[RMDB]
RNA sequence: GGGAACGACUCGAGUAGAGUCGAAAAGCUGAGUUCGCUCAGCCAAAGUCUGACACGGACCAACGGUAGCAAGUCUUGCUCCAACAUUUGGUCGCGGUGCGAUGACGUUCCGGGACUUCGGUCCCGGCGUAGCACCAUUCUUCGGAAUGGUGCUACGAAAAGAAACAACAACAACAAC
Reactivity to 2A3 in 0.01 (KOAc 150mM, MgCl2 10mM, bicine 150mM(pH8.5), 24C), signal-to-noise 4, nucleotides 027 to 126: g000c010u000g000a000g000u040u090c150g080c090u010c000a000g050c000c010a090a190a000g000u000c010u020g020a030c010a010c030g000g000a010c000c010a020a020c040g070g120u260a010g020c010a090a050g160u150c140u200u040g000c000u010c010c000a100a130c050a170u030u080u050g130g010u040c230g300c110g300g000u010g000c060g040a030u050g000a000c020g030u080u010c020c020g000g000g000a000c040u080u100c300g080g010u010c010c000c010g000g000
Reactivity to DMS in 0.01 (KOAc 150mM, MgCl2 10mM, bicine 150mM(pH8.5), 24C), signal-to-noise 3, nucleotides 027 to 126: g010c000u000g010a000g000u000u000c280g040c000u010c000a010g010c000c100a000a120a170g000u000c010u000g010a270c030a010c000g000g000a020c000c000a010a030c300g000g010u000a000g020c010a020a120g020u020c160u010u000g010c000u000c000c010a130a090c160a160u010u000u000g010g000u000c000g000c020g000g010u000g020c060g000a140u000g000a040c020g030u010u000c000c000g010g000g000a000c000u000u000c160g030g000u000c000c000c000g000g000